[RMDB]
RNA sequence: GGGAACGACUCGAGUAGAGUCGAAAAGGGCCUUUCGAGGCCCCUGAGCGAUAUGGAUCCCUACCCUGGCUACUACUAUCGGUCUCGGAAACGAGACCGACGAAUAGUAGAACUACCAGGAUGGGAUCCUAAGUCCUGACCGCGGCUUCGGCCGCAAAUAUUGUUUAAUCUUCGGAUUAAACAAUAUAAAAGAAACAACAACAACAAC
Reactivity to 2A3 in 0.01 (KOAc 150mM, MgCl2 10mM, bicine 150mM(pH8.5), 24C), signal-to-noise 2, nucleotides 027 to 156: g010g000g000c010c010u090u050u180c300g120a040g010g010c000c000c000c000u050g040a020g030c180g010a000u000a000u030g000g000a000u010c000c000c010u010a050c000c000c000u010g000g040c000u000a000c000u000a020c040u000a000u000c010g010g000u020c000u000c000g010g000a020a010a000c000g000a000g020a010c020c000g000a000c000g000a190a300u000a010g010u000a000g000a010a000c050u170a040c000c000a000g000g010a000u010g000g000g010a000u000c000c000u000a000a000g000u000c000c000u020g060a060c000c120g000c000g000g010c010u060u080c300g100g000c000c000g000c010a000a030
Reactivity to DMS in 0.01 (KOAc 150mM, MgCl2 10mM, bicine 150mM(pH8.5), 24C), signal-to-noise 1, nucleotides 027 to 156: g000g040g060c010c000u020u000u000c250g040a040g050g010c000c000c000c030u000g000a060g010c110g000a070u000a090u000g000g010a040u000c000c010c000u000a130c120c000c020u000g000g020c000u010a030c020u020a020c030u000a050u000c010g000g000u000c010u000c000g030g000a030a020a120c000g000a060g010a020c000c000g000a000c020g040a060a030u000a020g020u010a020g000a040a090c060u000a260c030c000a010g040g000a010u000g000g030g010a000u000c010c000u000a000a080g000u000c000c020u000g000a210c110c070g030c000g010g000c010u000u010c220g030g000c010c010g050c010a000a040
An RNA of 207 nucleotides, treated with 2A3 and DMS and read out base by base. The RNA was probed in 150 mM KOAc, 10 mM MgCl2 and 150 mM bicine (pH 8.5) at 24 C. DMS adducts were read by reverse transcription with MarathonRT. Reactivities are given for positions 27 through 156. It was measured as part of the RMDB library RNAMAK. The 2A3 profile rests on 2,160 reads.